[RMDB]
Annotation: The record gives the reactivity of an RNA of 170 nucleotides to DMS and 2A3. Source: RMDB library 15KLIB, as collected in RNAgym. Conditions: 150 mM KOAc, 10 mM MgCl2 and 150 mM bicine (pH 8.5), 24 C. Values cover nucleotides 27 to 129.
RNA sequence: GGGAACGACUCGAGUAGAGUCGAAAAUCGGUUCUUCUUCGAUCCGGACCGGCUCAUCUCGGCAAAAGGCGGCAGUCCUCAGUACUCUUACUCUUUCCUAUAAAGAGGAGACUGCUGGACUCGCCGCGGACCUGAAGGUUCGCCUUCAGGAAAAGAAACAACAACAACAAC
Reactivity to DMS in 0.01 (KOAc 150mM, MgCl2 10mM, bicine 150mM(pH8.5), 24C), signal-to-noise 9, nucleotides 027 to 129: u010c010g000g060u030u020c000u030u020c120u090u070c160g010a050u000c030c030g000g050a080c100c000g000g000c000u000c000a160u040c030u000c030g010g030c110a050a040a080a080g060g020c000g030g020c000a020g010u000c010c020u000c010a040g000u040a160c020u040c030u030u040a300c020u000c030u010u020u010c160c160u090a130u120a110a030a020g020a030g040g020a020g030a020c010u000g030c120u020g000g020a020c000u000c080g040c000c010g010c010g020g040a060
Reactivity to 2A3 in 0.01 (KOAc 150mM, MgCl2 10mM, bicine 150mM(pH8.5), 24C), signal-to-noise 9, nucleotides 027 to 129: u070c000g000g010u020u000c010u200u030c030u130u200c140g030a040u010c010c000g000g010a030c030c000g010g000c000u000c010a150u020c010u000c000g020g020c050a050a060a030a050g160g000c000g000g000c000a000g000u000c000c000u000c000a010g010u130a300c020u010c010u050u150a230c000u010c000u020u090u050c050c080u180a160u250a280a030a000g010a000g010g010a000g000a000c000u010g020c080u000g000g000a000c000u010c050g000c000c000g000c000g000g000a010